Source: RMDB library OK3TST, as collected in RNAgym. The record gives the reactivity of an RNA of 207 nucleotides to 2A3 and DMS. 2A3 adducts were read by reverse transcription with SuperScript II with manganese.

[RMDB]
RNA sequence: GGGAACGACUCGAGUAGAGUCGAAAAGGGCUUGACCCAUCGCCCGAAUAAGAUGGAUGAUACAAGUCGACAUUGUACGCGACGUAGAACGUACUCAUUGAAGUGCGAAAGCACGAAGUCCGACGGGUCUGGGACGAUCAUCAGGCAAGACUUAGAAGCUAUCCGUAUUAUUCGUAAUACGGAUAGCAAAAGAAACAACAACAACAAC
Reactivity to 2A3 in 0.01 (KOAc 150mM, MgCl2 10mM, bicine 150mM(pH8.5), 24C), signal-to-noise 7, nucleotides 027 to 156: g050g010g000c020u050u060g060a120c000c000c000a010u040c030g010c010c010c020g020a060a130u250a100a050g050a030u090g040g020a020u060g020a010u070a150c060a090a040g020u030c010g020a030c050a110u080u180g020u080a040c060g010c030g040a050c050g030u020a040g040a090a010c020g000u010a000c010u020c040a110u070u260g100a150a030g010u000g000c050g030a090a030a000g030c020a000c050g040a040a010g010u000c010c010g030a020c010g020g000g010u020c020u020g010g000g000a020c050g020a070u060c010a030u000c020a030g030g030c020a040a050g040a090c010u040u110a030g020a210a010
Reactivity to DMS in 0.01 (KOAc 150mM, MgCl2 10mM, bicine 150mM(pH8.5), 24C), signal-to-noise 4, nucleotides 027 to 156: g000g000g040c020u000u000g010a130c000c000c030a050u000c040g010c030c050c000g020a100a190u010a060a100g020a050u000g030g010a100u000g020a140u000a110c100a070a100g040u020c010g000a130c050a220u010u000g040u010a040c000g020c020g000a210c130g030u000a120g000a100a050c030g030u000a020c020u020c100a190u000u000g020a130a170g030u000g000c020g020a090a080a180g010c000a050c020g020a070a130g030u000c010c020g010a110c060g010g030g040u000c010u030g010g020g020a060c050g000a070u000c080a080u000c020a060g000g020c020a050a110g010a090c070u010u000a110g010a150a270